[RMDB]
RNA sequence: GGGAACGACUCGAGUAGAGUCGAAAAGGGGGUAAGAUGGGUUUGAUAAGCGAGUCGAGGGAAGCAUGGUGCCUCGAUAAUAAAGUAUGCAUUAAAGAUAAACGCAGAAGAUAAUUUUGCAUUAGCAGCUUAAUUUAGCGCUGCUCAUCCUUCCUCACCAUACAGCAAGCUUCGGCUUGCUGUAUGGAAAAGAAACAACAACAACAAC
Reactivity to 2A3 in 0.01 (KOAc 150mM, MgCl2 10mM, bicine 150mM(pH8.5), 24C), signal-to-noise 2, nucleotides 027 to 156: g020g000g000g000g020u010a010a010g000a040u050g000g070g000u010u110u090g090a050u020a050a040g000c020g040a000g030u010c000g020a020g000g030g000a080a000g110c070a050u110g080g000u080g040c000c000u010c010g010a040u040a030a010u020a050a060a020g040u040a080u140g000c010a030u100u160a120a040a020g050a090u040a130a130a000c130g000c030a010g000a060a010g070a120u180a190a220u110u090u060u050g000c010a020u010u040a010g000c010a000g000c020u050u020a040a030u300u150u120a040g010c010g010c040u020g000c000u000c000a020u010c000c010u050u050c010c000u000c000a020